[RMDB]
RNA sequence: GGGAACGACUCGAGUAGAGUCGAAAAGUCACCGGUGGCGCCUCAGGCCUGGGUCUGGCCACCACCAAGCGGCUAUUGGACGCUGGGGCACAGGUGGUCGUCGUGGACCUCCGCGGCGACGACGUGGUAUUAUCUCACCUUUCGAGGUGAGAUAAUAAAAAGAAACAACAACAACAAC
Reactivity to 2A3 in 0.01 (KOAc 150mM, MgCl2 10mM, bicine 150mM(pH8.5), 24C), signal-to-noise 3, nucleotides 027 to 126: g060u040c030a020c160c020g010g020u020g020g040c050g020c030c020u060c060a040g040g060c020c050u270g220g040g020u030c050u060g050g000c010c000a010c000c000a020c000c010a040a020g030c010g030g000c030u150a210u230u300g120g030a030c020g000c040u010g000g000g030g000c040a020c010a070g080g060u060g040g020u010c010g010u000c000g000u010g020g030a110c010c030u140c060c000g000c000g000g030c000g010a000c000g010a000c010g050u060g060g010
Reactivity to DMS in 0.01 (KOAc 150mM, MgCl2 10mM, bicine 150mM(pH8.5), 24C), signal-to-noise 9, nucleotides 027 to 126: g010u010c060a100c050c040g020g020u000g010g010c120g020c080c040u020c040a040g010g020c020c030u000g010g010g010u000c040u000g010g010c130c010a030c010c030a070c090c110a090a070g010c030g000g000c020u000a130u010u010g010g000a050c040g010c010u000g000g000g000g000c090a090c060a060g000g030u000g000g010u000c000g020u000c010g020u000g000g000a210c270c300u010c010c010g020c020g000g000c000g000a010c010g000a020c030g000u000g000g000

This 177-nucleotide RNA was probed chemically with 2A3 and DMS. For DMS the reverse transcriptase was MarathonRT. For 2A3, 9,083 sequencing reads were counted. 2A3 adducts were read by reverse transcription with SuperScript II with manganese. The DMS profile rests on 19,101 reads.